[RMDB]
RNA sequence: GGGAACGACUCGAGUAGAGUCGAAAAACGGCAGCACACGUCAUUCGUGCUGGAGUGUGGCCGAGUUAAUGCACUCGGGUAAGGUAACAACUCCCAGUUCGAUAGGAUUGACCUGCAGCCAAGCCUUUGGUUACGCCAAGGGUACUGUUCACAGACUCCGUAUAUUGCGGUUCGCCGCAAUAUACGGAAAAGAAACAACAACAACAAC
Reactivity to 2A3 in 0.01 (KOAc 150mM, MgCl2 10mM, bicine 150mM(pH8.5), 24C), signal-to-noise 2, nucleotides 027 to 156: a010c030g000g000c000a040g040c010a020c030a040c140g000u000c000a050u050u000c000g010u000g000c020u000g000g000a050g000u060g000u020g010g000c010c010g000a000g000u020u080a280a150u270g060c140a020c010u000c000g000g020g000u050a060a050g130g070u110a060a020c030a020a050c010u000c020c010c000a000g010u030u020c020g010a020u020a130g170g020a100u000u120g040a020c000c030u020g030c000a030g020c010c020a000a050g020c000c040u010u000u010g060g010u110u130a060c210g010c030c010a000a000g000g000g000u030a060c070u070g050u040u050c040a050c010a070g060a110c010u030
Conditions: 150 mM KOAc, 10 mM MgCl2 and 150 mM bicine (pH 8.5), 24 C. Chemical mapping of a 207-nucleotide RNA with 2A3. Values cover nucleotides 27 to 156.